Chemical mapping of a 177-nucleotide RNA with DMS. The RNA was probed in 150 mM KOAc, 10 mM MgCl2 and 150 mM bicine (pH 8.5) at 24 C. For DMS, 4,409 sequencing reads were counted. Source: RMDB library TTRINS, as collected in RNAgym.

RNA sequence: GGGAACGACUCGAGUAGAGUCGAAAAGAUAUGGAGAGUGCAUGAUAUACUCUUGAUGACCCAUGAAAUACAUAUUCGGAAACGAAUAUCACUCAUGGCAAGAGAGUAUCAUGCACUCUCCUAAGUCCAACAGUAAAACGUUCGCGUUUUACUGUUGAAAAGAAACAACAACAACAAC
Reactivity to DMS in 0.01 (KOAc 150mM, MgCl2 10mM, bicine 150mM(pH8.5), 24C), signal-to-noise 5, nucleotides 027 to 126: g010a120u000a300u020g010g000a030g020a010g020u010g000c000a000u010g010a030u020a050u020a180c000u000c000u010u000g000a170u010g010a200c300c020c010a000u010g000a030a120a150u020a150c300a030u000a010u000u010c010g020g000a140a100a250c020g020a010a010u000a000u000c170a160c190u000c000a000u000g000g000c020a020a010g000a020g020a300g000u000a000u000c010a000u000g000c000a000c000u000c000u000c000c000u000a000a100g000u000c040